An RNA of 207 nucleotides, treated with DMS and 2A3 and read out base by base. The reactions ran in a buffer of 150 mM KOAc, 10 mM MgCl2 and 150 mM bicine (pH 8.5), at 24 C. It was measured as part of the RMDB library M2RFPK. The DMS profile rests on 2,115 reads.
RNA sequence: GGGAACGACUCGAGUAGAGUCGAAAACAAGAUCGGUGGAUAGCAGCCCUAUCAAUAUCUAGGAGAACUGUGCUAUGUUUAGAAGAUUAGGUAGUCUCUAAACAGAACAAUGUACCUGCUGAACAAAAAAAUCCAAUGGCGUUCGCGCCAUUGGAAACCUUUAUCCCUUGUUCGCAAGGGAUAAAGGAAAAGAAACAACAACAACAAC
Reactivity to DMS in 0.01 (KOAc 150mM, MgCl2 10mM, bicine 150mM(pH8.5), 24C), signal-to-noise 1, nucleotides 027 to 156: c040a070a130g010a160u000c010g050g020u020g000g010a070u000a010g050c030a070g010c040c010c020u000a190u000c050a110a080u020a160u000c170u050a030g010g010a150g010a050a070c010u010g010u020g040c010u030a120u010g000u010u000u000a030g000a090a100g020a040u010u000a170g030g070u000a170g000u000c000u010c000u000a000a010a010c010a050g000a090a080c040a060a070u000g040u010a030c090c000u010g010c030u000g000a050a090c090a000a000a030a100a200a090a140u000c000c010a010a000u000g010g020c030g090u000u010c300g000c000g030c020c000a000u010u000g010g000a000a010a030
Reactivity to 2A3 in 0.01 (KOAc 150mM, MgCl2 10mM, bicine 150mM(pH8.5), 24C), signal-to-noise 3, nucleotides 027 to 156: c030a060a030g040a100u060c040g030g010u040g050g010a080u060a050g020c020a000g000c000c000c010u050a060u100c050a110a120u100a050u240c070u060a040g010g040a090g040a100a090c070u090g010u030g060c000u060a040u060g010u000u020u010a060g010a250a030g000a050u060u060a050g020g140u100a040g040u010c000u010c000u010a020a020a000c010a000g020a030a050c050a020a110u110g000u070a060c020c020u030g020c010u020g060a090a020c070a020a030a000a000a000a010a020u010c000c000a000a000u000g000g000c020g030u040u030c210g000c010g000c070c010a000u000u000g000g010a010a000a000